Chemical mapping of a 177-nucleotide RNA with 2A3 and DMS. Values cover nucleotides 27 to 126. For DMS, 5,990 sequencing reads were counted. The reactions ran in a buffer of 150 mM KOAc, 10 mM MgCl2 and 150 mM bicine (pH 8.5), at 24 C. DMS (dimethyl sulfate) methylates the pairing face of unpaired adenines and cytosines.
RNA sequence: GGGAACGACUCGAGUAGAGUCGAAAAGAUAUGGACGUGACAAGACAUGAUUAUGACCUCGGAAACGAGGUAUAAUCAACAGCUUGCCACGUCCUAAGUCAAACCGAGGCGCUUCGGCGCCUCGGAAGCUAAGCUAUAAGUUCGCUUAUAGCUUAGCAAAAGAAACAACAACAACAAC
Reactivity to 2A3 in 0.01 (KOAc 150mM, MgCl2 10mM, bicine 150mM(pH8.5), 24C), signal-to-noise 5, nucleotides 027 to 126: g010a000u020a010u060g000g000a000c010g000u010g000a020c010a010a000g010a030c110a300u300g030a010u020u010a010u060g300a160c000c010u000c010g000g000a030a020a010c010g010a000g000g000u000a000u000a000a000u000c000a040a070c070a040g030c000u000u010g000c010c000a000c000g000u000c000c000u000a010a010g000u000c010a050a000a060c000c000g020a010g000g000c070g010c070u190u260c300g180g000c050g060c050c000u000c000g000g010a000a010
Reactivity to DMS in 0.01 (KOAc 150mM, MgCl2 10mM, bicine 150mM(pH8.5), 24C), signal-to-noise 4, nucleotides 027 to 126: g000a020u000a140u010g010g000a010c000g040u000g000a010c010a010a010g020a040c140a210u020g010a020u000u000a010u000g010a050c000c000u000c000g010g010a020a050a090c000g020a010g000g000u000a000u000a000a000u000c000a090a070c280a160g000c000u000u000g000c020c010a010c000g000u000c000c010u000a000a060g010u000c020a110a180a210c000c000g010a010g000g030c010g050c020u000u010c250g010g010c000g030c000c010u000c000g000g000a010a060